Conditions: 150 mM KOAc, 10 mM MgCl2 and 150 mM bicine (pH 8.5), 24 C. Structure probing data (2A3 and DMS) for a 177-nucleotide construct. For 2A3 the reverse transcriptase was SuperScript II with manganese. The data come from the RNA Mapping Database (RMDB), library RFMREP.

RNA sequence: GGGAACGACUCGAGUAGAGUCGAAAAUCGUCGGUCUCCGGUUUUCCGACCCGUCCCCCGUCGGAAACCGGAUGGUAGCGGUAGUCUCAUUCCCCUCUCCGGGCUGCCGCUGUGUAGUGACAUGGCCCUAUAACAGAGUGUUCGCACUCUGUUAUAGAAAAGAAACAACAACAACAAC
Reactivity to 2A3 in 0.01 (KOAc 150mM, MgCl2 10mM, bicine 150mM(pH8.5), 24C), signal-to-noise 1, nucleotides 027 to 126: u070c010g030u010c020g020g060u080c060u010c040c020g000g060u030u040u180u040c010c000g010a010c010c020c110g300u260c030c020c000c010c000g000u010c000g000g020a010a000a010c000c000g010g010a000u030g000g040u050a000g010c010g000g010u020a000g030u010c020u010c090a110u140u150c030c000c010c000u040c010u000c000c010g020g020g030c000u010g000c040c000g000c020u000g000u000g000u030a130g040u080g020a000c010a060u100g020g000c060c000
Reactivity to DMS in 0.01 (KOAc 150mM, MgCl2 10mM, bicine 150mM(pH8.5), 24C), signal-to-noise 5, nucleotides 027 to 126: u000c130g020u000c020g000g010u000c060u000c010c010g010g000u000u000u000u000c000c000g000a010c010c140c110g010u010c010c010c000c080c250g010u000c010g000g000a010a020a010c000c010g000g000a000u010g010g010u000a020g010c000g000g010u000a010g010u000c010u010c080a300u000u010c020c010c000c100u000c060u000c150c090g020g000g010c010u000g000c000c000g010c000u000g010u000g010u010a090g010u000g010a040c030a100u010g020g010c030c090